[RMDB]
This 177-nucleotide RNA was probed chemically with DMS and 2A3. The RNA was probed in 150 mM KOAc, 10 mM MgCl2 and 150 mM bicine (pH 8.5) at 24 C. For 2A3 the reverse transcriptase was SuperScript II with manganese. The DMS profile rests on 1,001 reads. 2A3 is a SHAPE reagent: it acylates the 2'-hydroxyl of flexible nucleotides of all four kinds.

RNA sequence: GGGAACGACUCGAGUAGAGUCGAAAACUACAUAAAUUCGUUUAUGUAGCAUCGGGGACGCGCAGACUCCCGGUCAGACGGCUCUAGCCUUCCAAGCUCUGCACUCAACAGCUUUCGAGCUGUUGAACGCAUCCGUCAAUUUCGAUUGACGGAUGCGAAAAGAAACAACAACAACAAC
Reactivity to DMS in 0.01 (KOAc 150mM, MgCl2 10mM, bicine 150mM(pH8.5), 24C), signal-to-noise 1, nucleotides 027 to 126: c000u000a000c000a000u000a010a000a000u000u000c210g000u000u000u000a010u000g000u000a000g020c120a060u020c020g020g010g000g000a100c070g010c070g000c040a040g000a060c090u040c000c030c010g000g000u020c150a090g000a070c090g000g010c010u010c140u010a140g010c020c000u000u000c010c110a090a080g000c100u020c010u000g010c040a080c100u010c000a000a000c010a000g000c000u000u000u010c130g040a000g010c010u000g010u000u000g000a010a090
Reactivity to 2A3 in 0.01 (KOAc 150mM, MgCl2 10mM, bicine 150mM(pH8.5), 24C), signal-to-noise 1, nucleotides 027 to 126: c000u020a000c000a000u030a020a020a020u040u070c140g050u060u010u000a000u020g010u000a000g020c030a040u090c010g010g000g000g020a050c070g090c020g000c170a000g000a000c010u010c000c080c000g000g110u070c030a010g010a050c000g040g000c040u010c120u210a030g030c000c000u040u000c040c050a000a020g060c080u030c000u050g010c000a010c040u020c000a010a010c010a000g040c020u140u090u210c250g170a020g000c000u000g000u000u010g010a010a010